[RMDB]
RNA sequence: GGGAACGACUCGAGUAGAGUCGAAAAGAUAUGGAAUCGAGACGUUCAACAGCUACACCUGUCGGAAACGACAGUUGUAGACAUGAACAACUCGAUUCCUAAGUCAAAAGUGUGCCUUCGGGCACACCGACAGAGUCUUGUUCGCAAGACUCUGUCGAAAAGAAACAACAACAACAAC
Reactivity to 2A3 in 0.01 (KOAc 150mM, MgCl2 10mM, bicine 150mM(pH8.5), 24C), signal-to-noise 1, nucleotides 027 to 126: g020a020u050a060u160g000g020a000a010u000c010g000a020g000a000c050g020u000u010c020a060a050c150a140g080c010u010a000c010a000c020c000u000g000u010c000g060g080a140a070a030c010g000a000c000a000g000u010u010g000u000a000g030a000c000a110u130g000a000a010c010a040a170c010u010c010g000a000u000u000c000c000u000a010a010g030u000c010a000a020a160a190g030u020g000u020g000c020c000u040u150c300g050g010g050c000a000c000a000c000
Reactivity to DMS in 0.01 (KOAc 150mM, MgCl2 10mM, bicine 150mM(pH8.5), 24C), signal-to-noise 2, nucleotides 027 to 126: g050a060u020a300u000g000g000a010a000u000c010g000a000g040a150c300g000u000u000c010a030a080c300a180g010c000u000a000c000a020c060c000u000g000u000c020g000g000a090a090a170c010g000a010c010a010g020u000u000g020u000a020g000a000c150a240u030g000a010a010c000a150a300c000u000c000g000a000u000u000c000c000u020a000a090g000u000c070a130a050a070a070g010u000g020u000g020c020c000u000u010c200g060g010g010c000a020c010a000c000
Source: RMDB library TTRDES, as collected in RNAgym. This 177-nucleotide RNA was probed chemically with 2A3 and DMS. 2A3 is a SHAPE reagent: it acylates the 2'-hydroxyl of flexible nucleotides of all four kinds.